[RMDB]
An RNA of 207 nucleotides, treated with 2A3 and DMS and read out base by base. The 2A3 profile rests on 3,870 reads. The reactions ran in a buffer of 150 mM KOAc, 10 mM MgCl2 and 150 mM bicine (pH 8.5), at 24 C. The DMS profile rests on 4,901 reads.
RNA sequence: GGGAACGACUCGAGUAGAGUCGAAAAGUGAUAUCAGGAUGAGAAUUAAACAGACUGUGUUUAUAAUAGUUUUGUCAUCAGGACAGUUAUAAGCAAGAUUAAUCUGAUUGACUAAGCGUGUAGAUAUUUUUUUAGGUUCUAUCUCGGACGGGAGUUCGUAAUUGUCUUACUUCGGUAAGACAAUUACAAAAGAAACAACAACAACAAC
Reactivity to 2A3 in 0.01 (KOAc 150mM, MgCl2 10mM, bicine 150mM(pH8.5), 24C), signal-to-noise 6, nucleotides 027 to 156: g060u040g020a040u020a020u110c040a050g140g020a060u100g040a030g090a110a140u150u130a100a060a030c030a020g190a120c090u080g030u010g020u210u060u020a050u010a070a050u040a090g020u000u020u050u080g030u030c020a060u040c010a030g050g040a020c020a030g020u070u060a090u050a080a030g040c040a040a040g040a150u090u130a050a020u020c010u010g030a090u090u100g010a020c020u040a030a030g020c030g030u050g030u100a030g030a030u030a060u030u090u030u010u010u030u070a030g000g000u030u000c010u030a090u040c020u010c020g030g020a010c020g030g030g030a080g020u030u030c020
Reactivity to DMS in 0.01 (KOAc 150mM, MgCl2 10mM, bicine 150mM(pH8.5), 24C), signal-to-noise 2, nucleotides 027 to 156: g020u000g010a050u000a030u000c010a100g010g020a080u000g000a130g010a090a070u000u000a020a050a170c020a090g010a040c060u000g010u000g010u000u000u010a010u000a020a040u000a120g020u000u000u000u000g020u020c090a210u000c090a100g020g000a030c020a160g000u000u000a030u000a010a030g000c000a040a100g010a150u000u010a080a060u000c020u010g010a190u000u000g000a070c030u000a070a110g020c060g010u000g020u000a070g010a010u000a000u000u000u000u000u000u000u000a080g030g020u000u000c020u000a050u000c020u000c030g010g010a070c050g010g050g000a100g020u000u000c070